This 177-nucleotide RNA was probed chemically with DMS and 2A3.
The reactions ran in a buffer of 150 mM KOAc, 10 mM MgCl2 and 150 mM bicine (pH 8.5), at 24 C.
2A3 adducts were read by reverse transcription with SuperScript II with manganese.
DMS adducts were read by reverse transcription with MarathonRT.

RNA sequence: GGGAACGACUCGAGUAGAGUCGAAAAGGAUCCUCUCACAGGAUUGUCUCUGUGGUCCGAAACUCCAACAGUAUUGCUUCGGGCCACCUACAGCAAUACUGUAGGUAUAGAGAGUAGGAGAGGAUCGUAAUGCGACCUGAUUCGUCAGGUCGCAUUAAAAAGAAACAACAACAACAAC
Reactivity to DMS in 0.01 (KOAc 150mM, MgCl2 10mM, bicine 150mM(pH8.5), 24C), signal-to-noise 2, nucleotides 027 to 126: g030g020a000u000c010c000u000c000u000c000a150c120a110g030g000a190u010u000g030u000c000u000c020u000g000u020g040g000u000c000c000g010a020a050a040c040u010c170c100a150a140c220a090g030u000a190u000u000g000c120u000u000c050g030g030g020c030c070a000c010c000u000a010c020a000g030c080a120a130u020a300c020u000g000u000a000g000g000u020a050u000a000g000a020g010a050g000u000a060g000g010a030g020a010g000g010a000u010c000g010
Reactivity to 2A3 in 0.01 (KOAc 150mM, MgCl2 10mM, bicine 150mM(pH8.5), 24C), signal-to-noise 2, nucleotides 027 to 126: g120g000a010u010c030c010u000c000u000c000a180c020a090g070g170a300u170u140g110u020c020u000c000u000g080u030g020g000u000c000c010g020a000a010a000c040u100c070c020a060a040c020a180g140u230a130u090u300g000c030u020u010c000g000g010g010c010c010a000c030c000u010a000c000a010g050c040a050a120u030a300c000u010g000u000a000g010g000u010a020u160a040g030a000g000a020g030u110a040g020g050a020g000a000g020g010a000u000c000g000